[RMDB]
RNA sequence: GGGAACGACUCGAGUAGAGUCGAAAAGGAUACACAGCCCCUCCGAUGCAGGGCUGCCCCCGGGAACCGUCACUCAUUUCGGCAGCUACAAUGUUUCUCGAGCAGCUGGCAAUUUCUCCUCUCCAGACGGUACCACCGAUGACCCUCUGGGAGGUCAAAUCCUUAUCAAAUUCGUUUGAUAAGGAUUAAAAGAAACAACAACAACAAC
Reactivity to 2A3 in 0.01 (KOAc 150mM, MgCl2 10mM, bicine 150mM(pH8.5), 24C), signal-to-noise 3, nucleotides 027 to 156: g060g000a050u060a200c130a010c000a070g010c000c020c000c020u120c080c050g020a060u120g050c090a030g080g000g000c020u020g000c010c010c000c020c040g000g020g030a020a030c030c030g040u070c030a020c070u080c050a100u060u230u150c050g040g010c020a040g060c020u070a040c050a160a080u180g050u040u100u000c070u040c030g020a020g060c030a010g010c030u040g060g000c020a000a030u010u080u030c070u020c030c010u040c020u060c010c000a010g000a010c020g020g010u040a080c010c060a090c020c070g030a030u160g080a030c050c000c000u020c020u020g020g010g000a010g020g000u000c000a030
Reactivity to DMS in 0.01 (KOAc 150mM, MgCl2 10mM, bicine 150mM(pH8.5), 24C), signal-to-noise 2, nucleotides 027 to 156: g010g010a150u000a130c120a090c000a090g000c020c000c040c030u000c040c140g000a110u010g040c060a080g020g010g020c030u010g010c000c040c010c010c000g010g000g010a070a030c040c030g020u020c070a110c040u010c080a180u000u010u010c060g010g000c000a090g000c040u000a060c040a110a170u000g010u010u000u000c030u000c030g000a110g010c040a090g000c010u040g040g010c050a050a090u010u000u000c020u000c000c030u010c020u020c030c020a090g010a030c100g010g000u000a050c070c040a280c100c090g000a130u000g010a110c010c010c020u000c020u000g000g000g000a060g010g020u000c060a050

The record gives the reactivity of an RNA of 207 nucleotides to 2A3 and DMS. The DMS profile rests on 4,971 reads. DMS adducts were read by reverse transcription with MarathonRT. It was measured as part of the RMDB library OK3TST. Conditions: 150 mM KOAc, 10 mM MgCl2 and 150 mM bicine (pH 8.5), 24 C.